[RMDB]
RNA sequence: GGGAACGACUCGAGUAGAGUCGAAAAUCCUAAGUCAAGUCACGAUACAUCAUGACAGAGCGUUGUCAGUCGGAAACGACUUGGAUUUACGCUCGGAGUAUCGAAGUCUUGAUAUGGAAAAUGCCUUGAUAAAUGGUUCGCCAUUUAUCAAGGCAAACCCCCUAGAAUAGUUCGCUAUUCUAGGGGGAAAAGAAACAACAACAACAAC
Reactivity to 2A3 in 0.01 (KOAc 150mM, MgCl2 10mM, bicine 150mM(pH8.5), 24C), signal-to-noise 2, nucleotides 027 to 156: u020c010c000u020a140a000g000u010c010a000a000g030u030c010a010c060g000a010u000a020c050a300u050c110a130u200g120a110c120a120g010a020g000c020g000u000u010g030u000c000a000g030u000c000g010g040a120a050a060c010g050a000c010u030u120g150g000a020u220u090u140a000c000g000c000u000c000g000g000a000g000u020a000u000c000g030a090a010g000u010c000u010u000g000a000u030a070u150g040g050a020a110a060a050u190g000c090c000u000u010g000a000u000a000a000a000u000g030g020u090u120c300g040c050c000a020u000u000u000a000u000c000a000a000g000g000c000a000a000a000
Reactivity to DMS in 0.01 (KOAc 150mM, MgCl2 10mM, bicine 150mM(pH8.5), 24C), signal-to-noise 2, nucleotides 027 to 156: u000c000c010u010a100a230g010u010c000a030a030g000u000c020a300c000g040a100u000a020c020a140u000c020a260u030g010a270c040a050g000a010g020c010g060u000u030g000u010c020a030g010u000c010g030g020a120a120a300c040g060a030c000u000u000g100g000a020u010u000u000a050c020g050c020u000c000g030g000a240g050u000a000u010c000g010a060a270g050u010c000u000u000g010a030u000a240u000g010g000a060a080a060a120u000g010c000c000u000u000g010a030u010a020a030a000u000g010g030u010u040c300g040c030c000a000u010u010u000a030u000c020a010a030g000g000c000a000a000a010
The data come from the RNA Mapping Database (RMDB), library RNAMAK. This 207-nucleotide RNA was probed chemically with 2A3 and DMS. For 2A3, 1,238 sequencing reads were counted. The reactions ran in a buffer of 150 mM KOAc, 10 mM MgCl2 and 150 mM bicine (pH 8.5), at 24 C.